[RMDB]
RNA sequence: GGGAACGACUCGAGUAGAGUCGAAAAGCAUGGCUCGGUGACAUCCCCGGCAUGAGGGAGUGGAUCGGUGAGCGCGAGAUCCAGAACCUCUCCGGCUCCGCCUACACCAUCAAGAACAAGGACUUCGAGCUGACUGUCGGCGUAGACCGCAACGCGGCCAGAAUCCUCCAUUCGUGGAGGAUUCUGGAAAAGAAACAACAACAACAAC
Reactivity to 2A3 in 0.01 (KOAc 150mM, MgCl2 10mM, bicine 150mM(pH8.5), 24C), signal-to-noise 1, nucleotides 027 to 156: g060c020a060u210g040g000c030u060c040g210g000u100g020a100c020a120u060c000c080c000c010g030g010c090a190u150g010a010g010g000g000a210g110u010g010g000a020u020c100g030g030u240g060a080g000c120g040c010g020a080g000a060u030c010c000a010g060a080a100c020c030u000c000u000c000c000g000g010c000u000c010c020g000c000c010u050a080c060a010c080c000a020u130c070a110a000g010a060a030c020a130a140g100g000a060c090u080u020c080g020a000g000c050u040g120a170c000u010g040u150c030g000g020c000g000u030a090g050a100c020c020g000c090a100a140c170g040c040g100g020
Conditions: 150 mM KOAc, 10 mM MgCl2 and 150 mM bicine (pH 8.5), 24 C. Chemical mapping of a 207-nucleotide RNA with 2A3. For 2A3 the reverse transcriptase was SuperScript II with manganese. The data come from the RNA Mapping Database (RMDB), library OK3TST.